Source: RMDB library OK1LIB, as collected in RNAgym. Chemical mapping of a 177-nucleotide RNA with 2A3 and DMS. For 2A3, 57,529 sequencing reads were counted. For DMS the reverse transcriptase was MarathonRT. For DMS, 87,158 sequencing reads were counted.
[RMDB]
RNA sequence: GGGAACGACUCGAGUAGAGUCGAAAACUGCCGACGCCCUGUGUUGAGGCGUGGUGUCGCCUCGAGACAGUCGUUGAGAUCCGAAGAAGGGUGUACAUCUGACUGUUCGAGCAGAUGUGAGUCGAGGGCGGCUGCCGACGUUCGCGUUGGUGGUCGCAAAAGAAACAACAACAACAAC
Reactivity to 2A3 in 0.01 (KOAc 150mM, MgCl2 10mM, bicine 150mM(pH8.5), 24C), signal-to-noise 9, nucleotides 027 to 126: c010u020g010c000c000g010a010c000g020c000c030c010u020g010u010g020u050u120g050a030g020g030c010g010u020g040g080u070g030u030c010g000c000c000u000c000g010a010g000a000c000a000g010u020c000g000u010u020g030a040g010a040u000c000c020g030a110a040g070a090a110g120g010g000u040g020u050a020c000a010u000c020u060g050a080c000u020g050u120u060c030g040a010g000c000a000g000a040u090g030u030g050a030g030u030c020g010a040g010g060
Reactivity to DMS in 0.01 (KOAc 150mM, MgCl2 10mM, bicine 150mM(pH8.5), 24C), signal-to-noise 9, nucleotides 027 to 126: c030u000g020c050c010g000a030c020g000c070c110c020u010g010u020g010u010u010g010a050g010g010c000g020u010g010g020u030g010u010c020g010c030c000u000c010g000a050g000a020c010a020g010u020c020g010u010u000g000a170g000a050u010c020c020g010a130a110g020a160a110g000g010g010u010g010u030a070c010a010u000c000u030g010a080c020u000g000u020u020c120g010a100g000c020a020g010a050u010g010u010g010a100g010u000c020g000a130g010g000